[RMDB]
RNA sequence: GGGAACGACUCGAGUAGAGUCGAAAAGAUGAGAACAUACUGUUCAGUUGGGCGAUCAGGUGACACUCCAAAUCUUGCAGGAGGUCACGAGCAAGACAAAGAGGACGGCCUGACUUAACAAAAGAAAAUUUAAUACGGGAUUCGUCCCGUAUUAAAUAAAAGAAACAACAACAACAAC
Reactivity to DMS in 0.01 (KOAc 150mM, MgCl2 10mM, bicine 150mM(pH8.5), 24C), signal-to-noise 6, nucleotides 027 to 126: g010a070u040g000a120g000a060a040c060a080u020a120c140u000g000u000u010c030a120g030u010u000g000g000g000c120g010a180u000c030a040g000g000u000g020a120c110a120c010u000c000c000a050a180a180u010c060u010u010g020c080a140g020g020a130g000g010u000c130a050c040g000a130g010c050a030a050g020a010c070a060a210a200g010a060g000g010a120c160g000g000c000c010u010g000a010c040u020u000a030a020c040a060a070a090a060g000a040a050a090
Reactivity to 2A3 in 0.01 (KOAc 150mM, MgCl2 10mM, bicine 150mM(pH8.5), 24C), signal-to-noise 7, nucleotides 027 to 126: g130a100u240g050a020g030a100a040c050a070u250a100c070u050g000u000u010c020a000g000u000u010g000g010g000c060g040a140u060c040a030g090g090u020g010a020c140a140c120u000c010c020a060a090a140u140c120u130u230g050c070a080g010g020a020g000g040u010c010a010c010g010a030g010c060a090a010g050a190c070a030a130a020g090a040g100g070a020c050g080g020c000c000u010g010a010c000u000u000a030a000c020a000a110a010a000g110a030a070a020
The record gives the reactivity of an RNA of 177 nucleotides to DMS and 2A3. Source: RMDB library OK1LIB, as collected in RNAgym. The 2A3 profile rests on 5,654 reads. Conditions: 150 mM KOAc, 10 mM MgCl2 and 150 mM bicine (pH 8.5), 24 C. For 2A3 the reverse transcriptase was SuperScript II with manganese.